[RMDB]
RNA sequence: GGGAACGACUCGAGUAGAGUCGAAAACGCGUCAUGUUCGCAUGACGCGCAUUACCGAGAAAGGAGCUCGGUAUAAAACUCCAACCCUUGGAAACAAGGGUAAACCGAUAGUAUUCGUACUAUCGAAUCGUGUAUGUUAUUUCGAUAACAUACACGAAAAAGAAACAACAACAACAAC
Reactivity to 2A3 in 0.01 (KOAc 150mM, MgCl2 10mM, bicine 150mM(pH8.5), 24C), signal-to-noise 6, nucleotides 027 to 126: c010g000c010g000u000c000a000u000g030u040u060c150g010c140a000u000g000a000c000g000c000g000c000a000u010u100a040c000c010g000a000g010a020a250a050g150g030a060g070c010u000c000g010g020u010a000u010a000a010a000a000c020u020c010c010a020a020c000c000c010u000u000g010g010a060a030a020c000a010a000g020g000g000u000a030a000a010c050c010g000a000u000a000g010u000a020u030u060c210g020u030a000c000u000a000u000c010g010a020a090
Reactivity to DMS in 0.01 (KOAc 150mM, MgCl2 10mM, bicine 150mM(pH8.5), 24C), signal-to-noise 6, nucleotides 027 to 126: c010g010c010g010u000c000a000u000g010u010u010c190g020c000a020u000g010a000c000g010c000g020c040a050u010u010a210c010c000g000a010g000a070a120a100g010g010a070g010c010u000c000g010g020u000a040u010a020a040a060a060c040u000c010c030a220a080c000c010c000u000u000g000g000a160a120a190c000a000a000g010g000g010u000a010a050a090c230c020g010a010u000a010g000u000a020u000u010c170g010u000a010c000u000a000u000c000g010a090a090